[RMDB]
Source: RMDB library OK3TST, as collected in RNAgym. This 207-nucleotide RNA was probed chemically with 2A3. For 2A3 the reverse transcriptase was SuperScript II with manganese.
RNA sequence: GGGAACGACUCGAGUAGAGUCGAAAACACGGGCAAGGUACGCUACCACAGAGAUAACGACACGGUUGGUCUACUCACGCUACAGAACAAGCACUUGAGUGUAGAAGGGGACUGCGUGACCAUUCGUUUCCGUGGGAAGGAUCGUGUGGAACACGAGCUCCCUGACCAACUUCGGUUGGUCAGGGAGAAAAGAAACAACAACAACAAC
Reactivity to 2A3 in 0.01 (KOAc 150mM, MgCl2 10mM, bicine 150mM(pH8.5), 24C), signal-to-noise 2, nucleotides 027 to 156: c050a010c020g000g000g080c080a060a090g090g020u110a080c090g030c030u060a010c010c000a010c040a040g110a060g000a050u140a110a080c010g020a000c000a000c000g130g000u140u150g000g000u010c030u040a150c040u030c000a030c080g000c020u240a080c020a010g100a130a060c070a290a000g110c080a060c090u140u090g030a030g070u030g030u060a070g030a100a010g030g040g000g000a020c020u080g010c020g000u000g020a050c000c000a030u010u000c000g010u010u030u000c010c050g000u000g000g020g030a020a110g020g000a060u050c020g000u040g010u020g180g030a060a000c010a000c060g010a020g010